[RMDB]
RNA sequence: GGGAACGACUCGAGUAGAGUCGAAAAGAUAUGGAAAGGACUCGUUUCAUAGAUACUCCGAUAAGCUCGUAUCGGAAACGAUACAGAGCUUUUGACGGAGUCUAUGAAACGAGUCCUUUCCUAAGUCCAAAGAUAACAAGUUCGCUUGUUAUCUUUGAAAAGAAACAACAACAACAAC
Reactivity to DMS in 0.01 (KOAc 150mM, MgCl2 10mM, bicine 150mM(pH8.5), 24C), signal-to-noise 4, nucleotides 027 to 126: g010a090u010a300u010g000g010a010a010a010g010g010a020c000u000c000g020u000u000u000c000a010u000a010g000a150u000a050c030u000c000c000g020a190u010a020a010g000c010u000c000g000u000a010u000c000g010g000a110a050a180c010g010a000u000a010c000a170g020a000g010c010u000u000u000u010g000a270c110g010g000a030g010u000c000u000a000u000g000a000a000a020c000g000a000g000u000c000c000u000u000u000c000c000u000a010a070g010u000c050